[RMDB]
RNA sequence: GGGAACGACUCGAGUAGAGUCGAAAAACAUGCUGGCCAACCCAACCCCACGAUCCUCCAUCGGCAUGAUCAUGAUGUGCUCUCAAAUAUCAGGCCAGUAAAUCACCAUGCUCGUGCUGGUAAAGGCAACUUAUGCCCAAGUUCGCUUGGGCAUAAAGUCAGAUGAACACUUCGGUGUUCAUCUGACAAAAGAAACAACAACAACAAC
Reactivity to 2A3 in 0.01 (KOAc 150mM, MgCl2 10mM, bicine 150mM(pH8.5), 24C), signal-to-noise 1, nucleotides 027 to 156: a000c080a020u090g010c000u000g000g020c000c000a110a000c040c010c040a040a130c090c020c030c040a050c130g110a220u030c010c040u010c020c020a090u040c000g000g000c000a000u000g010a000u000c000a000u020g020a060u100g000u030g050c000u030c070u060c090a000a020a030u140a100u120c080a060g030g000c000c000a000g000u030a000a030a030u110c000a010c010c000a000u000g000c000u000c000g020u000g000c030u030g010g000u040a140a140a000g000g000c020a030a060c070u000u010a000u000g030c000c000c000a000a000g000u060u060c030g050c100u010u000g080g000g000c000a000u000a000a000a000

The record gives the reactivity of an RNA of 207 nucleotides to 2A3. It was measured as part of the RMDB library M2RFOK. The reactions ran in a buffer of 150 mM KOAc, 10 mM MgCl2 and 150 mM bicine (pH 8.5), at 24 C. Reactivities are given for positions 27 through 156.